[RMDB]
Conditions: 150 mM KOAc, 10 mM MgCl2 and 150 mM bicine (pH 8.5), 24 C. Chemical mapping of a 177-nucleotide RNA with DMS and 2A3. Reactivities are given for positions 27 through 126. For 2A3 the reverse transcriptase was SuperScript II with manganese.
RNA sequence: GGGAACGACUCGAGUAGAGUCGAAAAGGUGGUGCAAGAAACAAGAUAGGCUACUUAUCAAGUGCUUCAAAGCCAUCACGUUUCUGACGGACAAGAUAAGCUGCUUCUCUUCUACUACAGCUAUUCCUCUGUGAGGGGGAUUCGUCCCCCUCACAGAAAAAGAAACAACAACAACAAC
Reactivity to DMS in 0.01 (KOAc 150mM, MgCl2 10mM, bicine 150mM(pH8.5), 24C), signal-to-noise 2, nucleotides 027 to 126: g000g030u000g020g040u000g040c100a110a030g000a030a040a030c110a120a190g000a010u000a060g000g000c020u000a070c020u000u000a060u020c050a090a160g020u000g000c070u020u000c220a020a030a070g020c010c110a060u030c070a120c260g000u000u000u060c080u010g000a040c120g040g040a040c120a110a130g010a030u010a050a110g010c030u000g000c050u000u000c010u010c030u000u000c020u000a060c050u000a090c070a080g040c070u000a100u010u000c010c000
Reactivity to 2A3 in 0.01 (KOAc 150mM, MgCl2 10mM, bicine 150mM(pH8.5), 24C), signal-to-noise 3, nucleotides 027 to 126: g020g010u060g000g000u010g040c070a120a010g010a070a010a010c030a050a070g010a070u030a050g000g000c010u090a040c030u070u070a130u180c080a140a020g010u040g060c070u110u120c040a150a100a000g000c020c000a010u050c040a000c100g010u030u050u020c020u020g000a030c030g060g000a020c030a010a120g040a080u080a060a020g040c050u110g010c000u060u030c020u010c000u030u080c020u040a100c000u030a070c020a000g070c060u150a100u040u060c000c000

The data come from the RNA Mapping Database (RMDB), libraries RFM100 and RFMREP.